[RMDB]
RNA sequence: GGGAACGACUCGAGUAGAGUCGAAAAGAUAUGGAAAUAUUUUGGCUUCGAUUGAGGCAACAGCCAUAAGGUUCGGAAACGAACCAAUGGACAUGCCUCUGUCGAAGCCAAAAUAUUUCCUAAGUCAGUUUAUGUAGAUCUUCGGAUCUACAUAAACAAAAGAAACAACAACAACAAC
Reactivity to DMS in 0.01 (KOAc 150mM, MgCl2 10mM, bicine 150mM(pH8.5), 24C), signal-to-noise 2, nucleotides 027 to 126: g000a040u000a300u000g010g000a010a000a000u000a010u000u000u000u000g000g000c000u000u000c000g000a020u000u000g010a020g000g020c020a030a040c300a240g020c010c000a000u010a200a130g030g000u000u000c000g010g010a100a090a220c010g010a020a010c020c000a140a020u010g000g010a040c130a210u000g000c000c010u000c020u000g020u000c000g010a030a010g010c010c000a000a010a020a000u000a020u010u000u000c000c000u000a010a070g010u010c060a150
Chemical mapping of a 177-nucleotide RNA with DMS. Conditions: 150 mM KOAc, 10 mM MgCl2 and 150 mM bicine (pH 8.5), 24 C. The data come from the RNA Mapping Database (RMDB), library TTRINS.